The record gives the reactivity of an RNA of 177 nucleotides to DMS and 2A3. The 2A3 profile rests on 70,812 reads. DMS adducts were read by reverse transcription with MarathonRT. Reactivities are given for positions 27 through 126.
RNA sequence: GGGAACGACUCGAGUAGAGUCGAAAAACACCAGAUCGUGUUCAAAAGGUAUGGCAAGCCUGCCUUGCUGAACUCGAUAGCAAGGUAUUAGCUGGGCAUUUCCACAACACCUAUGGCAUGGCAAUUAAUGCUAAAUAGUAUUCGUACUAUUUAGCAUAAAAGAAACAACAACAACAAC
Reactivity to DMS in 0.01 (KOAc 150mM, MgCl2 10mM, bicine 150mM(pH8.5), 24C), signal-to-noise 9, nucleotides 027 to 126: a060c110a130c020c020a110g000a070u000c110g010u000g010u000u000c060a040a070a070a060g010g020u000a040u010g020g010c070a130a090g010c010c070u000g000c000c000u000u000g010c090u000g000a050a060c130u010c140g010a070u010a040g010c050a050a020g010g010u000a040u010u010a070g010c050u000g010g010g010c080a070u000u000u000c020c020a070c110a050a050c090a040c030c040u000a110u000g010g000c030a060u000g000g000c110a080a070u010u000a080
Reactivity to 2A3 in 0.01 (KOAc 150mM, MgCl2 10mM, bicine 150mM(pH8.5), 24C), signal-to-noise 9, nucleotides 027 to 126: a000c070a030c010c010a020g010a140u070c020g010u020g020u120u140c030a040a050a030a040g020g010u040a050u160g050g000c050a060a020g050c000c000u010g000c000c000u020u020g020c050u050g030a080a070c080u030c090g050a060u060a020g020c010a020a020g010g010u060a090u120u170a130g060c060u070g000g040g000c050a140u040u070u010c020c010a030c020a070a040c020a030c010c010u040a050u050g010g000c020a010u020g030g010c020a040a080u140u170a160